The data come from the RNA Mapping Database (RMDB), library OK2TST. Chemical mapping of a 177-nucleotide RNA with 2A3 and DMS. 2A3 adducts were read by reverse transcription with SuperScript II with manganese.
[RMDB]
RNA sequence: GGGAACGACUCGAGUAGAGUCGAAAAGGCAUAACGACGCGCGUCUGAGUGUAAGCGAUCAUCAUGAUAGAGAAGGUGCGCUCCUUGUCAUCAACGUCGAUUACAGUGAGCGAAGUGCCGUCGAGACACGCUUCUGGGAAUUCGUUCCCAGAAGCGUAAAAGAAACAACAACAACAAC
Reactivity to 2A3 in 0.01 (KOAc 150mM, MgCl2 10mM, bicine 150mM(pH8.5), 24C), signal-to-noise 1, nucleotides 027 to 126: g050g000c020a070u040a110a110c000g020a000c000g130c000g000c030g080u030c030u030g120a140g070u040g040u060a030a000g050c030g010a030u060c010a030u060c000a050u110g030a010u070a080g050a000g040a070a030g080g000u080g040c060g000c110u070c000c010u000u040g140u030c010a000u050c010a040a120c040g060u040c020g000a000u000u060a000c020a080g170u040g140a040g000c080g030a070a000g040u060g040c070c010g000u030c000g030a040g030a000c020
Reactivity to DMS in 0.01 (KOAc 150mM, MgCl2 10mM, bicine 150mM(pH8.5), 24C), signal-to-noise 2, nucleotides 027 to 126: g010g010c080a070u020a130a130c040g020a000c000g000c080g000c040g020u020c020u010g010a170g000u010g000u000a010a040g000c030g000a040u010c120a090u040c240a130u030g000a040u010a110g000a030g010a060a000g000g000u000g040c130g010c100u010c000c000u000u000g000u000c030a030u000c000a090a150c300g000u000c030g000a020u000u000a010c000a020g000u000g000a110g000c060g010a070a120g030u020g020c030c030g010u010c010g000a180g000a150c130